[RMDB]
RNA sequence: GGGAACGACUCGAGUAGAGUCGAAAAGGGCGUUAAGCCAGUUUUUCUCUUCCGGGUUGGCGAAGAUCCGCUCGCGCAAGGCCCGGCGCUGCAAUGUUCCAUCAGCAGCAAUCAUGUUAGCGCCAAAGUAGCAAGUAGUAUUCGUACUACUUGCUACAAAAGAAACAACAACAACAAC
Reactivity to DMS in 0.01 (KOAc 150mM, MgCl2 10mM, bicine 150mM(pH8.5), 24C), signal-to-noise 9, nucleotides 027 to 126: g010g010g010c010g020u010u000a080a150g010c060c040a080g000u000u000u000u000u000c030u000c060u010u000c010c000g000g000g020u000u000g010g010c020g000a080a100g000a110u010c120c120g020c060u010c060g010c020g010c080a110a110g010g010c010c010c010g020g020c300g010c010u000g010c030a110a110u010g000u000u000c070c050a080u000c140a200g010c030a030g010c030a120a070u010c140a070u010g010u000u000a040g010c020g010c040c070a080a090a120
Reactivity to 2A3 in 0.01 (KOAc 150mM, MgCl2 10mM, bicine 150mM(pH8.5), 24C), signal-to-noise 5, nucleotides 027 to 126: g060g010g010c040g030u090u120a040a020g050c040c010a010g000u060u030u010u090u020c040u010c000u100u030c020c000g000g000g030u040u070g050g000c030g040a110a050g050a170u040c050c030g020c050u010c010g000c000g010c040a060a090g060g010c000c020c000g000g000c040g000c000u010g000c030a080a190u100g050u180u150c080c050a100u090c060a080g080c000a000g000c010a020a050u100c050a030u140g070u260u130a020g000c010g010c000c030a080a060a010